[RMDB]
RNA sequence: GGGAACGACUCGAGUAGAGUCGAAAAGGAGCCCCCGGCCCAGCGUGGUCCGCCUCCCUCUCGGCGUCCACCUGCCCGGAGUACUGCCAGCGGGCAUGACCGACCCACCAGGGGCGCCGCCGCCGGCCGAGUAUUAGCAGUUCGCUGCUAAUACUCGAAAAGAAACAACAACAACAAC
Reactivity to DMS in 0.01 (KOAc 150mM, MgCl2 10mM, bicine 150mM(pH8.5), 24C), signal-to-noise 4, nucleotides 027 to 126: g020g000a130g010c040c010c030c010c010g010g020c060c080c030a090g000c140g010u000g010g000u010c150c050g000c020c010u000c030c050c020u020c050u010c080g000g000c040g000u010c020c040a080c080c020u000g000c300c020c010g020g010a080g010u010a080c090u020g020c000c010a200g020c050g010g000g020c060a050u000g010a080c100c070g000a140c020c000c030a120c130c080a170g000g010g000g020c020g000c040c020g000c060c010g020c000c060g000g020c080
Reactivity to 2A3 in 0.01 (KOAc 150mM, MgCl2 10mM, bicine 150mM(pH8.5), 24C), signal-to-noise 6, nucleotides 027 to 126: g070g010a040g060c000c000c000c010c020g010g020c010c030c020a030g020c030g100u070g020g020u020c020c060g010c000c000u070c020c020c000u060c010u030c040g010g010c010g030u020c020c010a050c020c010u020g000c000c010c010g010g020a070g040u090a090c070u070g040c020c000a050g060c060g020g020g020c040a040u110g050a050c040c030g060a120c000c000c020a050c030c070a060g010g010g010g020c020g000c000c010g020c000c000g000c010c010g000g010c010
This 177-nucleotide RNA was probed chemically with DMS and 2A3. Reactivities are given for positions 27 through 126. For 2A3, 9,114 sequencing reads were counted.